[RMDB]
RNA sequence: GGGAACGACUCGAGUAGAGUCGAAAAACUAGUAUGUACAGGGGUGAGUUGACCUGUCAUCUAGACUGCUGACCAUCAACUCACCGGUCAGCUGGAUGAUCUCCACAGAGUACGACAUCAGUACUCAGAGUAAGGAUGGCUUCGGCUAUCUUUACUCAAAAGAAACAACAACAACAAC
Reactivity to 2A3 in 0.01 (KOAc 150mM, MgCl2 10mM, bicine 150mM(pH8.5), 24C), signal-to-noise 9, nucleotides 027 to 126: a000c010u010a010g050u130a060u070g070u100a010c010a010g040g020g030g050u130g080a130g050u050u080g090a070c000c010u000g000u000c000a000u000c000u010a020g070a110c040u040g000c000u000g000a000c000c000a030u110c040a050a070c050u030c090a070c030c020g000g000u000c000a000g000c010u010g020g010a060u100g020a030u030c020u000c020c010a040c040a050g000a000g000u010a000c050g110a040c140a200u160c050a050g000u000a000c000u000c010a010
Reactivity to DMS in 0.01 (KOAc 150mM, MgCl2 10mM, bicine 150mM(pH8.5), 24C), signal-to-noise 9, nucleotides 027 to 126: a180c010u000a010g000u050a010u000g010u050a010c010a010g000g000g000g000u010g010a070g020u010u010g010a070c020c030u000g000u000c000a010u000c010u000a020g010a170c070u000g000c030u000g010a010c010c070a150u020c110a030a040c090u010c070a070c160c080g010g000u000c000a010g000c010u010g010g000a080u020g010a140u010c050u010c010c110a120c250a100g000a010g010u000a010c000g010a160c220a120u040c120a110g010u000a000c000u000c000a110
The record gives the reactivity of an RNA of 177 nucleotides to 2A3 and DMS. For 2A3 the reverse transcriptase was SuperScript II with manganese. Values cover nucleotides 27 to 126. Conditions: 150 mM KOAc, 10 mM MgCl2 and 150 mM bicine (pH 8.5), 24 C. For DMS, 62,354 sequencing reads were counted. DMS adducts were read by reverse transcription with MarathonRT.